[RMDB]
RNA sequence: GGGAACGACUCGAGUAGAGUCGAAAAUAAACAGGUUCUCUUGUGCAAAUCGCGUUUCAUGGACAGACGGUGUCUUGCCCUGAUGUCCGGUUUUUUCCGUCAGCGCAGUGCCCGGCUGUUCUGUUGCGUCUCUAGUGUGUUUCGACACACUAGAGACAAAAGAAACAACAACAACAAC
Reactivity to 2A3 in 0.01 (KOAc 150mM, MgCl2 10mM, bicine 150mM(pH8.5), 24C), signal-to-noise 2, nucleotides 027 to 126: u170a010a060a000c030a040g060g010u020u050c080u040c020u080u080g050u040g100c050a040a060a180u170c060g000c020g070u000u010u060c100a100u150g000g000a010c010a010g000a000c000g000g000u100g000u000c050u020u020g000c040c060c000u010g030a070u050g090u100c130c010g040g000u160u090u000u000u110u060c010c020g060u000c010a000g000c000g000c000a010g020u040g060c040c000c020g000g030c000u010g070u020u000c000u030g030u000u060g010c030
Reactivity to DMS in 0.01 (KOAc 150mM, MgCl2 10mM, bicine 150mM(pH8.5), 24C), signal-to-noise 2, nucleotides 027 to 126: u020a030a070a070c160a110g000g000u020u000c020u020c010u010u040g010u040g020c070a070a130a100u000c100g000c140g020u000u000u000c060a080u030g010g000a020c010a000g000a040c050g000g010u000g020u020c080u030u010g000c010c100c010u000g000a010u000g010u020c150c040g030g010u000u000u000u000u000u010c030c020g010u000c000a050g000c300g000c010a030g000u000g010c100c000c060g000g040c000u000g000u000u020c020u000g010u010u010g000c300